[RMDB]
The record gives the reactivity of an RNA of 177 nucleotides to 2A3 and DMS. The data come from the RNA Mapping Database (RMDB), library RFMREP. Values cover nucleotides 27 to 126.
RNA sequence: GGGAACGACUCGAGUAGAGUCGAAAAACCACAUUUCGAUGUGGUAAUUGGUCGGCAGUUCACCUAGGCAUCGCCGCUACGAAAAAUCGUAGAGCUAAACCUGCUGUAAGCGGAAUUUCGAUUCCGCACAAUGCUGAGAAUUCGUUCUCAGCAUUGUAAAAGAAACAACAACAACAAC
Reactivity to 2A3 in 0.01 (KOAc 150mM, MgCl2 10mM, bicine 150mM(pH8.5), 24C), signal-to-noise 7, nucleotides 027 to 126: a000c010c000a010c010a020u120u130u100c210g120a020u000g000u010g000g010u030a040a120u090u070g010g000u010c000g020g000c000a010g010u060u060c000a020c020c010u040a120g050g000c020a080u120c090g060c080c040g020c020u000a000c010g080a060a080a070a050a190u080c010g000u010a010g000a010g030c000u020a010a010a010c010c000u010g000c010u020g130u110a100a020g000c000g000g020a010a010u040u060u090c100g040a040u000u030c000c000g000c000
Reactivity to DMS in 0.01 (KOAc 150mM, MgCl2 10mM, bicine 150mM(pH8.5), 24C), signal-to-noise 8, nucleotides 027 to 126: a030c000c000a010c010a000u000u000u020c170g020a020u000g020u000g010g010u000a040a060u010u000g010g010u000c030g010g000c010a020g000u000u000c020a020c010c000u010a160g010g020c040a150u000c170g010c120c090g010c010u000a000c000g000a020a110a100a110a130u000c000g000u000a010g000a140g010c030u000a030a020a020c140c000u000g010c010u010g010u010a070a140g010c000g000g010a020a000u000u000u010c160g010a150u000u000c000c000g020c000